[RMDB]
RNA sequence: GGGAACGACUCGAGUAGAGUCGAAAAUGGUGGUCUCUGGCAAAUUGGUCCGUAAAUGGGCUCGGUGGGUGCCUGCGUUUGCCACAGGUUGCCUGGGUGGGUCCCAGAGCGGGUGGGUGCGUGGUGGCGAUAUAUUUAAAUUCGUUUAAAUAUAUCGAAAAGAAACAACAACAACAAC
Reactivity to 2A3 in 0.01 (KOAc 150mM, MgCl2 10mM, bicine 150mM(pH8.5), 24C), signal-to-noise 8, nucleotides 027 to 126: u070g020g010u020g010g030u020c020u010c010u050g010g030c020a020a040a140u130u140g050g010u040c020c020g070u110a070a100a090u110g020g000g000c010u020c030g090g010u110g020g060g020u070g020c000c010u030g020c030g040u050u090u100g040c030c010a020c010a020g050g000u090u130g020c000c010u040g030g010g070u220g030g030g030u060c000c000c000a010g020a020g040c020g010g030g050u100g010g010g000u050g010c030g000u030g010g030u030g020g000
Reactivity to DMS in 0.01 (KOAc 150mM, MgCl2 10mM, bicine 150mM(pH8.5), 24C), signal-to-noise 9, nucleotides 027 to 126: u010g010g020u000g000g010u000c010u000c130u010g010g000c050a030a050a070u030u030g020g010u010c020c030g010u010a060a100a030u040g010g000g000c010u010c110g000g020u020g000g010g020u020g000c020c010u000g000c100g010u010u010u010g000c030c020a100c080a030g000g010u010u010g020c020c000u000g000g000g000u030g010g010g000u010c020c000c010a080g000a110g010c040g000g000g000u020g000g000g000u010g000c050g000u010g000g010u000g000g010